This 177-nucleotide RNA was probed chemically with 2A3 and DMS. For DMS the reverse transcriptase was MarathonRT. The 2A3 profile rests on 6,583 reads. Values are in units of 0.01, from 0 to 300, in steps of 10.
RNA sequence: GGGAACGACUCGAGUAGAGUCGAAAAGAUAUGGAGAGGGUAGGUAAAGCUGCUGUCGGAAACGACAGAUAGUAUACUACCUACCCACCUCCUAAGUCAAAGUUCACGUAGUUCGCUACGUGAACAACUCGAUAUCCAAGUUCGCUUGGAUAUCGAGAAAAGAAACAACAACAACAAC
Reactivity to 2A3 in 0.01 (KOAc 150mM, MgCl2 10mM, bicine 150mM(pH8.5), 24C), signal-to-noise 2, nucleotides 027 to 126: g000a020u020a000u060g000g000a000g020a020g020g020g000u010a000g020g000u040a190a170a100g000c000u020g020c000u010g020u010c010g000g000a010a010a000c000g000a000c010a000g000a040u020a000g010u020a040u040a150c220u070a000c020c000u000a000c000c000c000a010c000c000u000c010c000u010a020a000g000u000c040a180a060a040g000u020u000c000a000c000g010u000a000g010u040u040c300g020c180u000a000c000g000u040g010a000a000c020a000a000
Reactivity to DMS in 0.01 (KOAc 150mM, MgCl2 10mM, bicine 150mM(pH8.5), 24C), signal-to-noise 2, nucleotides 027 to 126: g020a020u000a080u020g000g010a020g020a210g000g000g000u000a000g000g000u000a020a060a130g010c000u000g010c010u000g000u010c000g000g000a020a020a030c000g000a000c000a010g000a030u010a000g030u010a050u000a120c300u010a000c000c000u000a010c000c000c000a010c110c000u000c000c000u000a000a070g000u000c010a100a060a110g000u000u000c000a000c010g020u000a010g010u010u010c280g030c000u010a000c010g000u000g000a010a010c000a050a050